Notes:
Chemical mapping of a 177-nucleotide RNA with 2A3 and DMS. Conditions: 150 mM KOAc, 10 mM MgCl2 and 150 mM bicine (pH 8.5), 24 C. 2A3 adducts were read by reverse transcription with SuperScript II with manganese. DMS adducts were read by reverse transcription with MarathonRT. The 2A3 profile rests on 491 reads.
RNA sequence: GGGAACGACUCGAGUAGAGUCGAAAAGGAGUCCACAGCAGCCUCGUGGAGGGGACAUUCCUCCCAGCCUGCGUAUCAUAGACUCAGCUACAGGCUUAGGGUCCUCAGGUUGCCCAAGGAUGCUGGAAUGCGCCAGUACUUUCGAGUACUGGCGCAUAAAAGAAACAACAACAACAAC
Reactivity to 2A3 in 0.01 (KOAc 150mM, MgCl2 10mM, bicine 150mM(pH8.5), 24C), signal-to-noise 1, nucleotides 027 to 126: g150g060a100g100u120c020c020a030c010a040g010c010a020g000c000c090u110c140g030u050g000g090a090g000g000g030g020a210c000a050u180u250c020c000u000c030c000c000a000g010c000c000u080g000c050g010u000a000u110c020a050u090a120g050a050c010u070c090a020g020c040u080a140c040a160g000g120c000u030u300a040g000g090g000u000c000c030u000c000a000g090g000u090u120g000c000c000c000a000a070g020g010a000u010g010c020u050g000g090a060
Reactivity to DMS in 0.01 (KOAc 150mM, MgCl2 10mM, bicine 150mM(pH8.5), 24C), signal-to-noise 1, nucleotides 027 to 126: g000g010a090g010u000c000c040a120c110a110g000c020a010g000c030c010u000c060g030u000g000g000a030g040g000g030g010a050c190a110u030u000c010c000u020c000c000c040a080g030c110c000u020g000c240g060u030a000u020c140a150u000a170g000a130c000u000c000a140g070c110u020a110c080a000g010g040c030u010u000a060g000g000g020u000c000c000u010c000a110g000g030u000u000g020c090c030c040a300a050g040g000a000u000g010c050u000g010g010a120